[RMDB]
RNA sequence: GGGAACGACUCGAGUAGAGUCGAAAACUAUACCCAAACAACUUGGAGUUGCAGGUAGGCGGCAAGUGAGUUCAUCCCCAUGAGCAUAGACGGGCUAUGUGAUUGGGGUGAACGAACGCAGCCCCCCAAGUCGGAUAUGGUUCGCCAUAUCCGACUUAAAAGAAACAACAACAACAAC
Reactivity to DMS in 0.01 (KOAc 150mM, MgCl2 10mM, bicine 150mM(pH8.5), 24C), signal-to-noise 3, nucleotides 027 to 126: c180u040a120u020a060c050c010c020a100a080a180c230a060a030c080u010u030g000g000a300g000u000u000g000c090a080g030g020u000a030g050g000c110g000g010c020a060a170g050u000g000a220g020u000u000c010a020u100c000c020c000c000a010u000g010a300g000c000a000u000a000g020a300c230g070g080g030c000u000a000u000g000u020g000a260u000u000g010g000g000g020u010g000a000a020c000g000a070a020c010g000c080a270g000c000c000c000c000c000c040
Reactivity to 2A3 in 0.01 (KOAc 150mM, MgCl2 10mM, bicine 150mM(pH8.5), 24C), signal-to-noise 2, nucleotides 027 to 126: c010u040a000u130a120c000c010c000a170a030a040c050a010a040c040u030u080g130g030a130g040u040u070g040c050a030g020g000u070a100g010g080c070g000g000c020a110a090g040u010g000a000g000u000u010c020a130u300c000c000c000c000a000u000g000a000g000c010a000u000a000g050a070c140g010g080g000c020u010a000u000g020u060g010a000u000u000g000g000g030g010u010g000a000a000c000g000a000a000c010g000c000a000g000c000c000c000c000c000c000

Structure probing data (DMS and 2A3) for a 177-nucleotide construct. The RNA was probed in 150 mM KOAc, 10 mM MgCl2 and 150 mM bicine (pH 8.5) at 24 C. For 2A3, 913 sequencing reads were counted.